[RMDB]
RNA sequence: GGGAACGACUCGAGUAGAGUCGAAAAAGAACAAGCCUGGAAUGACUUGUUUGCAGCUUAUGAAGCAGAAUAUCCAGAAUUAGCAGCAGAAUACCAAAAAGCCUUUACUAACGAAGCUGCUCAAGUACAUUAGCUGCGCAUUCGUGCGCAGCUAAUGAAAAGAAACAACAACAACAAC
Reactivity to DMS in 0.01 (KOAc 150mM, MgCl2 10mM, bicine 150mM(pH8.5), 24C), signal-to-noise 2, nucleotides 027 to 126: a010g000a040a050c070a010a030g070c080c000u000g000g040a280a050u020g000a020c020u000u000g000u010u010u010g000c040a060g010c000u010u000a090u030g000a050a070g050c070a110g040a090a120u030a150u000c050c030a100g010a240a150u000u010a060g000c050a010g040c080a040g000a180a080u020a130c160c050a010a040a060a080a130g000c090c060u000u000u020a090c100u020a060a160c090g020a050a110g000c020u000g000c000u000c060a040a020g000u000a080
Reactivity to 2A3 in 0.01 (KOAc 150mM, MgCl2 10mM, bicine 150mM(pH8.5), 24C), signal-to-noise 3, nucleotides 027 to 126: a000g060a010a010c030a040a030g070c000c000u050g120g040a120a130u230g030a060c020u000u000g040u030u080u060g120c070a090g000c000u090u010a060u300g060a090a000g010c080a020g000a240a040u120a160u140c040c010a020g120a070a110u240u080a070g010c000a000g000c010a020g130a100a080u170a170c080c100a150a020a050a120a000g060c010c020u100u100u080a090c100u090a100a070c050g040a010a000g000c000u000g000c010u000c010a020a090g080u050a030